[RMDB]
Description: Conditions: 150 mM KOAc, 10 mM MgCl2 and 150 mM bicine (pH 8.5), 24 C. The record gives the reactivity of an RNA of 177 nucleotides to 2A3 and DMS. Reactivities are given for positions 27 through 126. For 2A3 the reverse transcriptase was SuperScript II with manganese.
RNA sequence: GGGAACGACUCGAGUAGAGUCGAAAACGAGGUCUGGACAUAGUGGCACGCACCGUUGAUUCAGUGCUGCUAAAUGGAUGUAAGCACCCAGUUGACACACUGUACAUUGAUGAAGCGUUUGCAUGUCCCCACGAGCAUGAUUCGUCAUGCUCGUGGGAAAAGAAACAACAACAACAAC
Reactivity to 2A3 in 0.01 (KOAc 150mM, MgCl2 10mM, bicine 150mM(pH8.5), 24C), signal-to-noise 1, nucleotides 027 to 126: c030g040a050g030g110u050c010u050g020g020a000c000a000u070a030g080u070g110g000c030a000c040g020c010a080c050c110g070u040u070g040a090u070u090c040a020g000u000g000c060u000g020c000u030a070a040a070u130g030g030a040u070g030u100a030a050g060c010a060c010c030c000a050g020u040u090g050a020c040a000c000a000c040u010g020u110a000c020a190u070u090g050a040u120g040a100a020g000c000g020u020u050u130g090c090a050u060g050u060c000
Reactivity to DMS in 0.01 (KOAc 150mM, MgCl2 10mM, bicine 150mM(pH8.5), 24C), signal-to-noise 1, nucleotides 027 to 126: c090g040a100g020g000u000c050u000g020g030a110c070a090u000a120g030u010g020g010c080a070c120g060c010a050c100c050g000u010u000g020a160u020u000c020a060g010u000g000c140u000g000c000u000a010a050a020u000g030g000a040u000g010u000a090a110g000c020a040c020c070c060a100g020u000u000g000a090c030a050c040a060c020u000g000u010a040c070a070u000u010g000a050u010g010a070a070g000c070g000u000u000u000g020c050a070u000g000u000c000